[RMDB]
RNA sequence: GGGAACGACUCGAGUAGAGUCGAAAACGAUGACGACGCACGGCCCUGACCGCCAUUUUCACCGCUGGCUCCCUCCCGGUCCGCCGCAGGCGUUGCAGAAGGCUCGAUGAAACGAAUGGUCCGGACAGGUCAAGGUGUAGUUCGCUACACCUUGACCAAAAGAAACAACAACAACAAC
Reactivity to DMS in 0.01 (KOAc 150mM, MgCl2 10mM, bicine 150mM(pH8.5), 24C), signal-to-noise 1, nucleotides 027 to 126: c100g000a080u010g020a120c100g010a000c030g020c040a100c150g000g000c000c070c080u000g030a040c010c110g000c040c010a070u000u000u000u010c080a130c040c060g000c090u020g000g020c070u020c040c000c010u000c010c000c010g010g000u000c000c190g040c050c070g030c170a040g040g060c060g020u020u000g050c100a130g020a090a070g040g010c020u000c050g020a090u000g000a070a040a070c120g000a060a090u000g000g020u010c000c010g000g000a060c170a150
Overview
Structure probing data (DMS) for a 177-nucleotide construct. The RNA was probed in 150 mM KOAc, 10 mM MgCl2 and 150 mM bicine (pH 8.5) at 24 C.